[RMDB]
RNA sequence: GGGAACGACUCGAGUAGAGUCGAAAAGUGACACUGUUCGCAGUGUCACAAAGUGGUGGAUCUAGAACCACAAUUACUAGAUCAAAGAUCUAGUCUAGAUCAAAAGCAUACAGUUCGCUGUAUGCAAUCAUCUUCCUGAGUUCGCUCAGGAAGAUGAAAAAGAAACAACAACAACAAC
Reactivity to DMS in 0.01 (KOAc 150mM, MgCl2 10mM, bicine 150mM(pH8.5), 24C), signal-to-noise 2, nucleotides 027 to 126: g000u000g000a030c000a020c000u000g000u000u010c180g040c020a020g010u000g010u000c000a000c000a010a070a130g020u010g000g030u010g000g000a000u000c000u010a000g000a080a050c030c010a020c030a080a110u000u000a060c000u000a000g000a000u000c010a180a140a180g010a030u000c000u000a000g000u000c010u020a000g010a040u000c030a080a090a090a180g000c000a030u000a010c000a020g020u000u010c240g010c010u000g000u000a010u000g000c000a060a040
Reactivity to 2A3 in 0.01 (KOAc 150mM, MgCl2 10mM, bicine 150mM(pH8.5), 24C), signal-to-noise 3, nucleotides 027 to 126: g000u000g000a000c000a000c000u020g030u040u060c190g000c120a000g000u010g000u010c000a000c010a000a050a000g010u010g010g010u010g010g000a010u030c000u010a010g010a020a020c010c000a010c010a020a020u100u030a020c010u010a010g010a020u020c070a220a300a070g020a020u000c010u010a000g010u000c010u010a010g000a020u010c020a000a060a040a030g010c000a000u000a000c000a000g020u040u080c120g050c110u010g000u010a010u000g000c000a020a010